[RMDB]
RNA sequence: GGGAACGACUCGAGUAGAGUCGAAAAGUUAAAUAUAACUGCAAAAAAUAACACAACUUACGCUUUAGCUGCCUAAAAACCAGCCGGCGUGACUUCUAUAGGAUUGUUUGUGUCUUAUUAGAGGUCUCAAAACAGCAAGCUACGUUUAGGUGAUUGUGCUUACAUUGUAGUUCGCUACAAUGUAAGCAAAAGAAACAACAACAACAAC
Reactivity to 2A3 in 0.01 (KOAc 150mM, MgCl2 10mM, bicine 150mM(pH8.5), 24C), signal-to-noise 3, nucleotides 027 to 156: g000u010u020a040a170a090u180a100u050a090a100c030u130g040c070a000a090a030a040a070a090u210a130a050c060a010c040a140a120c040u140u140a020c030g010c010u040u070u110a030g000c000u000g000c000c010u080a080a060a020a030a050c030c000a020g030c030c020g020g000c010g010u000g000a000c000u020u040c000u020a020u010a010g010g000a010u030u050g160u190u170u170g110u050g000u020c000u000u030a040u030u080a000g000a000g010g000u000c000u050c050a050a160a070a050c010a010g040c020a030a060g000c030u070a020c050g020u040u080u140a090g000g030u040g060a160u060u190g040u060
Reactivity to DMS in 0.01 (KOAc 150mM, MgCl2 10mM, bicine 150mM(pH8.5), 24C), signal-to-noise 1, nucleotides 027 to 156: g000u010u020a090a110a140u020a160u000a040a070c060u000g010c020a120a050a110a020a080a090u010a060a210c030a110c050a030a050c030u000u000a000c060g010c030u000u000u010a020g020c000u000g040c000c020u000a090a040a130a260a100c260c000a070g060c030c070g000g050c020g000u000g000a000c000u010u000c020u000a060u030a040g020g070a020u000u020g010u010u010u020g030u010g030u010c000u000u000a100u010u000a020g020a040g000g030u000c010u000c040a030a040a080a080c110a040g040c030a030a100g010c020u000a040c060g000u000u000u030a110g000g040u000g010a080u000u000g000u000